[RMDB]
RNA sequence: GGGAACGACUCGAGUAGAGUCGAAAAACUUCUGCUUCAAAUGAUUCCUUGUUAGAGGAAUUAAACAAUAGAUUUGAACAAAUAACAAAUGCGUGGGUACAGGUGAGUAAAGAUGAAGCUCAAAAUUUUGUUCAUAAAACAGAAUACACUAAAGGUACUCAGUGAUCAGUUUCGACUGAUCACUGAGAAAAGAAACAACAACAACAAC
Reactivity to 2A3 in 0.01 (KOAc 150mM, MgCl2 10mM, bicine 150mM(pH8.5), 24C), signal-to-noise 2, nucleotides 027 to 156: a000c030u090u030c030u130g010c060u100u040c010a060a080a260u080g010a000u000u010c000c000u030u070g080u190u210a170g000a040g030g000a000a040u020u060a040a070a010c020a050a140u120a160g100a120u060u000u050g060a040a020c010a000a090a070u260a030a060c080a000a100a030u110g090c030g000u090g080g030g030u100a060c020a050g110g000u020g040a070g020u060a020a120a040g000a020u060g030a010a000g000c010u010c060a160a300a050a090u040u070u050u050g000u010u000c040a060u110a100a190a020a000c060a020g030a010a030u170a030c060a000c050u240a070a190a020g160g130u300a070